[RMDB]
RNA sequence: GGGAACGACUCGAGUAGAGUCGAAAAGUGCCAGAUGUCUUCGUUAUACUGAGCGAUUGUACGGUCAGAUGAGAAGAAUCCUGCUUUAGAAAUGUUAACGAUGACUUUAUCCAACCAUGCGUCACGGCAGGAGCUGCCCAUUCGUGGGCAGCUCCUGAAAAGAAACAACAACAACAAC
Reactivity to 2A3 in 0.01 (KOAc 150mM, MgCl2 10mM, bicine 150mM(pH8.5), 24C), signal-to-noise 1, nucleotides 027 to 126: g030u160g090c000c000a010g000a130u070g060u070c070u000u060c030g100u000u160a070u010a090c000u060g070a180g040c030g000a030u110u180g260u260a000c010g060g060u060c000a000g010a000u030g090a120g000a020a020g000a020a020u000c000c010u040g080c000u050u050u080a000g060a140a290a220u260g000u210u000a130a000c000g060a040u040g000a000c000u160u000u000a000u000c000c070a000a110c000c000a000u060g000c010g000u020c000a000c030g170g000
The record gives the reactivity of an RNA of 177 nucleotides to 2A3. For 2A3, 325 sequencing reads were counted. For 2A3 the reverse transcriptase was SuperScript II with manganese.